[RMDB]
RNA sequence: GGGAACGACUCGAGUAGAGUCGAAAAGAAGAUGAUGUGUAGGAUAGGUGGGAGGCUUUGAAGUGUGGACGCCAGUGUGCAUGGAGCCGACCUUGAAAUACCACCCUUUAAUGAAAAACAAAUACAACUAGUACAACUCUUUCGAGAGUUGUACUAGAAAAGAAACAACAACAACAAC
Reactivity to 2A3 in 0.01 (KOAc 150mM, MgCl2 10mM, bicine 150mM(pH8.5), 24C), signal-to-noise 2, nucleotides 027 to 126: g080a000a060g080a060u100g000a030u040g110u020g010u040a000g000g120a040u050a040g100g010u040g040g020g030a120g000g000c010u230u090u110g030a040a000g020u020g000u000g080g020a000c020g000c020c020a020g020u160g020u010g070c010a010u040g000g020a010g020c000c020g000a020c000c000u000u020g030a010a020a000u040a040c010c000a060c030c010c020u040u070u150a140a100u140g090a100a050a020a020a020c030a010a110a000u190a070c050a110a050
Reactivity to DMS in 0.01 (KOAc 150mM, MgCl2 10mM, bicine 150mM(pH8.5), 24C), signal-to-noise 4, nucleotides 027 to 126: g010a050a060g010a080u000g000a040u010g030u000g010u000a030g000g010a090u000a040g000g020u000g010g010g020a160g000g000c050u010u010u010g010a080a070g020u000g010u010g000g000a030c050g010c100c130a070g010u010g010u000g000c030a030u000g000g010a040g010c010c010g000a090c140c030u000u000g000a070a080a060u000a080c020c010a030c000c010c040u000u000u000a060a120u010g010a030a040a100a110a050c100a060a080a090u010a050c150a070a160
Description:
Structure probing data (2A3 and DMS) for a 177-nucleotide construct. Conditions: 150 mM KOAc, 10 mM MgCl2 and 150 mM bicine (pH 8.5), 24 C. It was measured as part of the RMDB library M2PK90. 2A3 adducts were read by reverse transcription with SuperScript II with manganese. For 2A3, 1,742 sequencing reads were counted.